[RMDB]
RNA sequence: GGGAACGACUCGAGUAGAGUCGAAAAAGGUUGCAGAAGGUAGAGCAUGCGAAAGGAUGGCCAGAUGGUAUGAGCAUGCGAAAGGAUGGACGAAGUAGCACUUAAGUCAGAUCCUAAUGCCAUCGGCGUACGGAAACCAUCCGUCCGUUAGGAUGGGCUUUACAUAACGGUUCGCCGUUAUGUAAAGAAAAGAAACAACAACAACAAC
Reactivity to 2A3 in 0.01 (KOAc 150mM, MgCl2 10mM, bicine 150mM(pH8.5), 24C), signal-to-noise 7, nucleotides 027 to 156: a000g090g000u050u050g020c010a020g020a110a010g070g000u110a020g010a020g060c030a020u040g010c010g090a130a040a050g110g030a100u150g070g000c020c010a060g030a080u090g020g020u040a060u080g040a020g020c010a020u060g010c030g030a050a040a010g030g000a010u070g020g010a010c020g020a040a000g020u080a030g050c090a040c100u070u050a130a020g010u020c030a020g050a190u010c000c000u060a070a040u090g030c000c000a010u010c010g010g010c010g010u040a020c020g010g020a060a080a080c050c010a040u010c010c000g040u030c020c030g050u050u100a050g000g040a000u000g000g000g000
Reactivity to DMS in 0.01 (KOAc 150mM, MgCl2 10mM, bicine 150mM(pH8.5), 24C), signal-to-noise 4, nucleotides 027 to 156: a110g030g000u010u000g020c040a090g020a070a130g020g030u010a090g010a300g010c000a050u000g000c030g000a090a060a130g010g010a070u010g020g020c030c020a100g030a060u000g020g000u000a040u000g010a220g020c040a050u000g010c000g010a070a100a080g010g000a110u000g020g020a080c050g020a100a100g020u000a150g020c050a300c070u000u000a030a120g010u000c010a110g020a100u000c010c010u000a100a110u000g010c000c000a030u000c020g010g010c020g020u010a070c080g000g000a080a070a120c050c030a060u010c010c000g010u000c030c100g000u000u010a090g020g010a020u000g000g010g000